Structure probing data (DMS) for a 177-nucleotide construct. The RNA was probed in 150 mM KOAc, 10 mM MgCl2 and 150 mM bicine (pH 8.5) at 24 C.
RNA sequence: GGGAACGACUCGAGUAGAGUCGAAAAGAUAUGGAAGAUUGUAGGGAGCUUACCAUCGGAAACGAUGGAAAGCAUCGAUCUACACUGUCUUCCUAAGUCAAAACAAGCCCCCUUCGGGGGGCUUGAAGAAUAAUACGUCCUUCGGGACGUAUUAUUCAAAAGAAACAACAACAACAAC
Reactivity to DMS in 0.01 (KOAc 150mM, MgCl2 10mM, bicine 150mM(pH8.5), 24C), signal-to-noise 2, nucleotides 027 to 126: g020a050u000a240u030g010g000a000a020g000a050u000u000g000u000a010g020g000g000a110g040c000u000u000a220c000c010a000u000c010g030g010a050a050a130c010g020a020u010g000g030a050a020a070g030c020a270u010c270g010a070u000c000u000a010c000a030c300u000g020u000c020u010u000c010c000u000a030a100g000u000c020a070a070a170a240c010a000a000g000c000c010c000c000c010u010u000c160g030g000g040g000g040g000c010u000u000g000a060a060